Structure probing data (2A3 and DMS) for a 177-nucleotide construct. The RNA was probed in 150 mM KOAc, 10 mM MgCl2 and 150 mM bicine (pH 8.5) at 24 C. The DMS profile rests on 4,258 reads. For 2A3 the reverse transcriptase was SuperScript II with manganese. The 2A3 profile rests on 3,700 reads. It was measured as part of the RMDB library OK2TRN.
[RMDB]
RNA sequence: GGGAACGACUCGAGUAGAGUCGAAAAUUAUAAAUUCAACGAAAGAACUAGGAAGAGAGAGGAGCUAUGGUUCAUGUCACACCAAGCAAUGAGGGUGGACGAUUUAUACAUUCCAAAGCUUGAACCACCAGGUAAAUCAAUUCGUUGAUUUACCUGGAAAAGAAACAACAACAACAAC
Reactivity to 2A3 in 0.01 (KOAc 150mM, MgCl2 10mM, bicine 150mM(pH8.5), 24C), signal-to-noise 2, nucleotides 027 to 126: u070u020a070u080a130a070a030u110u050c030a080a040c020g070a080a020a110g040a040a020c040u050a080g050g070a100a000g040a000g010a000g010a030g070g020a010g020c020u060a050u140g050g000u010u030c030a020u090g050u050c020a030c000a020c210c010a010a030g070c030a050a150u160g020a120g030g070g050u010g010g020a020c000g000a010u000u090u000a080u020a020c040a050u070u000c000c000a110a030a030g030c040u050u080g020a040a030c000c030a020
Reactivity to DMS in 0.01 (KOAc 150mM, MgCl2 10mM, bicine 150mM(pH8.5), 24C), signal-to-noise 5, nucleotides 027 to 126: u000u010a070u000a090a050a090u000u010c040a100a120c130g010a100a100a120g000a050a050c040u000a060g010g010a090a070g000a080g000a060g010a080g010g000a040g010c060u000a080u000g010g000u000u000c040a060u010g020u000c060a100c050a040c050c010a060a050g000c090a080a110u010g000a100g000g010g010u000g000g010a050c080g000a050u000u010u010a070u000a080c150a080u000u000c010c010a050a080a100g000c060u000u000g010a040a060c070c050a140